[RMDB]
RNA sequence: GGGAACGACUCGAGUAGAGUCGAAAAACGCCAAUCAGCAACAUUGACAUCAGGGCAUUGUUCAGAACUGCGAGAGACGUUGCUAUGUACCCAUUGAGUCUCCAACAUCUUUUGACUUGGAUUGGAGCCACUCAUCCAGUUUCGACUGGAUGAGUGGAAAAGAAACAACAACAACAAC
Reactivity to DMS in 0.01 (KOAc 150mM, MgCl2 10mM, bicine 150mM(pH8.5), 24C), signal-to-noise 1, nucleotides 027 to 126: a040c090g010c040c020a060a060u000c130a010g030c050a050a030c060a050u000u020g000a120c120a100u010c080a110g000g010g000c070a080u010u070g020u000u000c090a110g030a060a060c070u000g000c090g000a100g020a160g000a040c080g000u010u000g000c040u000a090u000g000u010a080c020c040c000a190u030u000g000a070g000u010c000u000c010c010a010a040c050a040u000c010u000u000u000u000g000a030c120u020u010g010g000a120u000u000g000g000a090g010
Reactivity to 2A3 in 0.01 (KOAc 150mM, MgCl2 10mM, bicine 150mM(pH8.5), 24C), signal-to-noise 2, nucleotides 027 to 126: a000c090g000c020c000a060a080u080c020a050g050c020a010a030c000a060u050u160g000a060c000a100u090c030a100g020g120g070c070a050u060u080g060u100u150c070a050g050a140a020c030u000g010c040g010a060g010a000g000a030c030g030u000u020g060c010u010a050u120g030u090a130c010c000c020a000u010u260g040a050g050u030c010u000c000c010a020a020c010a180u040c030u000u230u030u300g140a160c080u060u070g030g060a080u020u010g020g000a040g020
The record gives the reactivity of an RNA of 177 nucleotides to DMS and 2A3.
DMS adducts were read by reverse transcription with MarathonRT.
Conditions: 150 mM KOAc, 10 mM MgCl2 and 150 mM bicine (pH 8.5), 24 C.